Description: The record gives the reactivity of an RNA of 177 nucleotides to 2A3 and DMS.

RNA sequence: GGGAACGACUCGAGUAGAGUCGAAAACUAAAACAGCCUGCGGGUUGUACCCGCCCGCAGGGCCCACUGGGCGCUAGUACUCUGGUACGCUAGUACACUAGCACGUUAGUGCUUUUGUACGCCAGUAAAUAGGGCUUGUAUUCGUACAAGCCCUAUUAAAAGAAACAACAACAACAAC
Reactivity to 2A3 in 0.01 (KOAc 150mM, MgCl2 10mM, bicine 150mM(pH8.5), 24C), signal-to-noise 4, nucleotides 027 to 126: c020u050a040a000a000a100c030a030g100c000c000u000g010c010g020g010g010u020u080g050u070a140c010c010c000g000c000c000c000g000c010a000g000g000g000c000c020c000a220c090u110g030g020g020c030g000c070u030a050g080u040a050c040u050c060u170g110g000u010a030c030g020c100u060a010g000u000a000c010a010c000u000a000g010c000a010c020g060u100u260a090g000u010g000c000u010u000u000u000g010u000a000c010g030c000c010a010g020u040a000
Reactivity to DMS in 0.01 (KOAc 150mM, MgCl2 10mM, bicine 150mM(pH8.5), 24C), signal-to-noise 3, nucleotides 027 to 126: c090u020a050a070a130a120c080a140g010c000c000u000g010c010g000g010g010u010u030g010u020a050c060c010c070g000c000c010c000g020c010a010g000g010g010c020c040c020a080c140u020g000g000g020c070g010c090u020a080g020u020a070c090u010c100u020g020g010u000a030c060g020c150u010a090g010u000a000c000a020c010u000a000g010c000a010c000g020u030u070a080g020u000g000c000u010u000u000u000g010u000a010c020g020c040c030a020g010u020a050
For 2A3, 3,556 sequencing reads were counted.